Conditions: 150 mM KOAc, 10 mM MgCl2 and 150 mM bicine (pH 8.5), 24 C. The record gives the reactivity of an RNA of 177 nucleotides to DMS and 2A3. It was measured as part of the RMDB library OK1LIB.

[RMDB]
RNA sequence: GGGAACGACUCGAGUAGAGUCGAAAACAAUACAAUGCUGACGAUAAAUGUUACGGUUGCAGCUACACUUGGUGCAUAGUUUAGUUGUAACAUACUGAAAACUGUAGUACUUAGUGCUAUACCAAAGUGACUACCCGAAAUUCGUUUCGGGUAGUCAAAAAGAAACAACAACAACAAC
Reactivity to DMS in 0.01 (KOAc 150mM, MgCl2 10mM, bicine 150mM(pH8.5), 24C), signal-to-noise 1, nucleotides 027 to 126: c050a110a010u040a080c140a130a110u020g000c030u000g020a030c020g000a130u040a030a070a060u030g010u000u000a140c140g030g030u040u000g000c030a120g020c010u000a020c020a000c000u000u010g000g020u000g000c000a000u000a000g030u000u000u000a040g000u000u010g000u070a090a000c090a000u030a040c050u000g000a020a070a000a000c080u000g030u000a010g060u000a050c000u010u000a070g050u010g000c050u060a050u000a070c180c110a090a060a200g020
Reactivity to 2A3 in 0.01 (KOAc 150mM, MgCl2 10mM, bicine 150mM(pH8.5), 24C), signal-to-noise 4, nucleotides 027 to 126: c020a010a020u190a040c040a110a090u120g070c040u080g040a070c040g040a080u160a060a210a100u240g040u120u150a050c050g050g010u000u020g000c000a000g000c000u010a000c010a000c020u000u080g120g000u220g080c060a060u090a090g030u000u010u010a010g000u000u000g030u040a000a010c000a000u130a010c040u040g170a010a000a050a090c020u050g010u010a050g010u020a000c060u060u040a050g000u010g020c060u070a060u040a200c030c020a100a120a010g060
For 2A3 the reverse transcriptase was SuperScript II with manganese.